[RMDB]
This 177-nucleotide RNA was probed chemically with DMS and 2A3. Source: RMDB library M2PK50, as collected in RNAgym.
RNA sequence: GGGAACGACUCGAGUAGAGUCGAAAAGUCUCCCGAUUCGUCGGGAGACCGAGAAAUUCAGGUGAUUUGCUACCUUUAAGUCCAGCUAGAAAUUCAAAGGAAACACCAUGGCGUUCGCGCCAUGGAACUCGACAAAGUUAUUCGUAACUUUGUCGAGAAAAGAAACAACAACAACAAC
Reactivity to DMS in 0.01 (KOAc 150mM, MgCl2 10mM, bicine 150mM(pH8.5), 24C), signal-to-noise 3, nucleotides 027 to 126: g000u000c000u010c000c000c000g010a020u000u000c140g040u000c000g000g000g010a020g010a000c000c020g010a070g020a160a060a100u000u000c080a060g000g000u010g000a140u000u010u010g020c280u010a040c010c020u000u000u010a060a110g010u000c020c020a060g020c080u030a060g000a040a030a070u000u020c070a030a080a060g000g000a100a040a090c210a140c000c000a010u000g000g010c010g010u000u010c200g040c020g020c000c010a010u000g000g010a060a050
Reactivity to 2A3 in 0.01 (KOAc 150mM, MgCl2 10mM, bicine 150mM(pH8.5), 24C), signal-to-noise 4, nucleotides 027 to 126: g000u000c010u000c000c000c000g000a000u040u070c170g030u000c010g040g030g000a010g000a000c000c000g030a030g080a020a140a030u190u130c080a010g040g060u030g070a170u070u110u240g060c030u050a040c010c000u050u070u080a100a020g040u040c010c020a010g020c070u120a050g120a080a170a100u130u090c070a060a090a060g130g000a130a110a030c060a020c030c000a000u000g000g000c000g010u040u030c210g000c000g000c050c000a000u000g000g000a000a000

The reactions ran in a buffer of 150 mM KOAc, 10 mM MgCl2 and 150 mM bicine (pH 8.5), at 24 C.